An RNA of 207 nucleotides, treated with 2A3 and read out base by base. For 2A3, 390 sequencing reads were counted. The reactions ran in a buffer of 150 mM KOAc, 10 mM MgCl2 and 150 mM bicine (pH 8.5), at 24 C. Reactivities are given for positions 27 through 156.

[RMDB]
RNA sequence: GGGAACGACUCGAGUAGAGUCGAAAACUUGUUCAUCAUUAGGAAUCUAUCCAAUAUGGCAAUUAUACUAGAACUAUAGGUGCGUUGUAUACACAUAUUGAUGUGUCUGUUUAUACAAUCAAUGAUAUUUGGAUCCAUGCUACUACCUUCGGGUAAAUACCGGUAGGUUCUUCGGAACCUACCGGUAAAAAGAAACAACAACAACAAC
Reactivity to 2A3 in 0.01 (KOAc 150mM, MgCl2 10mM, bicine 150mM(pH8.5), 24C), signal-to-noise 1, nucleotides 027 to 156: c020u050u200g020u110u190c000a020u010c020a020u090u190a050g000g040a060a070u020c070u000a040u040c020c000a010a070u110a020u050g010g000c010a020a070u090u030a050u070a170c100u090a030g080a190a000c020u020a010u000a250g040g030u060g010c050g000u000u000g030u000a010u040a020c020a000c000a050u050a120u160u090g080a130u090g060u040g030u020c000u070g130u060u160u000a030u020a000c020a000a010u010c020a110a090u060g060a030u020a120u010u030u160g040g000a000u040c000c000a000u060g050c010u040a060c010u020a010c000c020u000u030c110g000g000g010u040a040a070a040